[RMDB]
RNA sequence: GGGAACGACUCGAGUAGAGUCGAAAAUGUAGCCGCAUAUAUAUUUGAGAAAUCAAGUGGUGGUGGCGUUGGCAGAGUUAAAAAGUACAGUAAAGGUGCAGCAAUGGACUUGCUAGAGGUUAUAUCAUACCGAUUUGGUCUUCGGACCAAAUCGGUAAAAAGAAACAACAACAACAAC
Reactivity to DMS in 0.01 (KOAc 150mM, MgCl2 10mM, bicine 150mM(pH8.5), 24C), signal-to-noise 1, nucleotides 027 to 126: u000g000u000a250g000c000c000g020c160a090u070a070u080a210u020a000u070u000u000g000a020g000a100a100a080u000c070a000a020g000u000g000g010u060g060g000u000g020g000c130g040u010u020g000g100c090a030g000a040g000u000u000a070a060a110a010a060g020u000a050c130a020g020u000a030a090a100g000g000u000g060c020a000g010c080a020a090u030g000g000a130c020u000u000g020c010u000a080g000a130g010g050u000u000a130u000a040u030c080a180
Annotation: The record gives the reactivity of an RNA of 177 nucleotides to DMS. Source: RMDB library OK1LIB, as collected in RNAgym.